[RMDB]
RNA sequence: GGGAACGACUCGAGUAGAGUCGAAAAGGAACUAUGUUCAGACAUGAAGCCUCCACGUGUGCGCGAAAGCGAUCGGAAACGAAUGAGCAUAGUUCCGAGCUGAAGGAGGCACGGCUCAAAAUAAAAACGUGCUAGAACUGUUCGCAGUUCUAGUACGAAAAGAAACAACAACAACAAC
Reactivity to DMS in 0.01 (KOAc 150mM, MgCl2 10mM, bicine 150mM(pH8.5), 24C), signal-to-noise 7, nucleotides 027 to 126: g000g000a010a000c010u000a000u000g010u000u000c000a000g000a030c010a010u000g000a090a100g030c000c010u000c000c010a300c020g010u000g000u000g000c010g000c000g010a120a090a110g000c000g010a020u000c000g010g000a120a090a160c010g010a010a020u000g000a010g000c000a000u000a000g010u000u000c000c000g000a010g000c000u000g000a050a090g010g010a020g000g000c000a300c030g000g000c000u000c000a130a070a060a110u060a070a050a070a070a100
Reactivity to 2A3 in 0.01 (KOAc 150mM, MgCl2 10mM, bicine 150mM(pH8.5), 24C), signal-to-noise 9, nucleotides 027 to 126: g000g000a000a000c000u000a000u000g000u000u000c000a000g000a010c000a000u020g030a080a020g000c000c000u000c000c000a030c010g000u000g000u010g000c010g000c000g050a060a020a020g000c000g010a020u010c000g020g030a040a030a020c010g000a010a010u000g000a000g000c000a000u000a000g000u000u000c000c000g000a000g000c000u030g020a130a050g010g000a000g000g010c050a020c010g000g000c000u000c000a070a080a010a020u220a020a050a010a000a010

An RNA of 177 nucleotides, treated with DMS and 2A3 and read out base by base. The reactions ran in a buffer of 150 mM KOAc, 10 mM MgCl2 and 150 mM bicine (pH 8.5), at 24 C. Values are in units of 0.01, from 0 to 300, in steps of 10. 2A3 is a SHAPE reagent: it acylates the 2'-hydroxyl of flexible nucleotides of all four kinds.